The data come from the RNA Mapping Database (RMDB), library 15KLIB.
The record gives the reactivity of an RNA of 170 nucleotides to DMS and 2A3.
The RNA was probed in 150 mM KOAc, 10 mM MgCl2 and 150 mM bicine (pH 8.5) at 24 C.
The 2A3 profile rests on 101,360 reads.
RNA sequence: GGGAACGACUCGAGUAGAGUCGAAAAUUCGAUCCGGACCGGCUCAUCUCGGCAAGAGGCGGCAGUCCUCAGUACUCUUACUCUUUCCUAUAAAGAGGAGACUGCUGGACUCGCCGCCCGAGCCCGAAAACUAGCAUGUUCGCAUGCUAGAAAAGAAACAACAACAACAAC
Reactivity to DMS in 0.01 (KOAc 150mM, MgCl2 10mM, bicine 150mM(pH8.5), 24C), signal-to-noise 9, nucleotides 027 to 129: u040u020c050g000a100u030c050c040g000g010a050c070c030g000g030c030u000c030a130u020c050u010c030g000g020c090a110a060g020a150g020g010c010g000g030c030a030g010u000c010c010u000c030a000g010u030a160c030u040c010u050u070a300c050u030c020u010u020u010c170c150u050a130u010a070a010a010g020a000g000g020a000g000a020c010u010g000c120u000g040g010a020c000u030c170g020c030c000g000c000c000c000g010a060g010c030c010c040g000a050a040a090a110
Reactivity to 2A3 in 0.01 (KOAc 150mM, MgCl2 10mM, bicine 150mM(pH8.5), 24C), signal-to-noise 9, nucleotides 027 to 129: u050u030c030g030a040u040c020c030g020g030a020c010c010g010g010c010u020c030a130u030c040u010c020g010g000c020a050a040g100a130g030g010c000g000g000c000a000g000u000c000c000u000c000a030g000u130a300c010u010c010u060u120a230c010u020c000u030u090u050c050c090u160a150u240a290a030a000g010a000g000g000a000g000a000c010u000g040c050u000g000g000a000c000u020c060g000c000c000g000c000c000c000g000a000g000c000c000c000g030a030a030a010a030